Structure probing data (DMS and 2A3) for a 177-nucleotide construct.
DMS adducts were read by reverse transcription with MarathonRT.
2A3 adducts were read by reverse transcription with SuperScript II with manganese.
The reactions ran in a buffer of 150 mM KOAc, 10 mM MgCl2 and 150 mM bicine (pH 8.5), at 24 C.
For DMS, 7,757 sequencing reads were counted.
RNA sequence: GGGAACGACUCGAGUAGAGUCGAAAAGACAAAUGCAGCAUAUUACGCUAAGCAGGAAAGGGACGGUAGCUCCUGGUGUCAGUUCAUACGGUGUGAUGCAUCUGCGUCGUGCACACAUGCACCCAAAGAAUGGAGUGGUAUUCGUACCACUCCAUUCAAAAGAAACAACAACAACAAC
Reactivity to DMS in 0.01 (KOAc 150mM, MgCl2 10mM, bicine 150mM(pH8.5), 24C), signal-to-noise 6, nucleotides 027 to 126: g000a060c060a050a090a100u010g010c040a040g000c040a090u000a090u010u020a080c130g000c040u000a060a100g010c040a020g000g010a070a080a060g000g000g010a060c070g000g010u000a090g010c070u000c020c020u010g010g020u000g010u000c050a060g010u010u000c060a080u000a090c100g000g010u000g010u000g010a090u000g000c020a030u000c070u010g020c110g020u000c120g010u010g000c030a030c060a030c070a040u000g000c060a100c020c010c040a070a090a120
Reactivity to 2A3 in 0.01 (KOAc 150mM, MgCl2 10mM, bicine 150mM(pH8.5), 24C), signal-to-noise 6, nucleotides 027 to 126: g050a020c030a020a090a030u110g010c010a020g030c030a020u100a090u260u160a110c070g000c030u060a060a050g020c010a010g010g090a080a060a060g050g000g020a010c050g050g040u080a030g010c030u020c020c020u030g000g030u030g030u050c060a050g030u080u090c040a040u080a170c080g030g000u020g010u050g050a160u030g010c020a020u020c040u120g060c030g060u110c020g010u050g000c010a010c000a000c000a040u050g050c000a060c010c010c000a030a100a030
Notes: The 2A3 profile rests on 9,017 reads.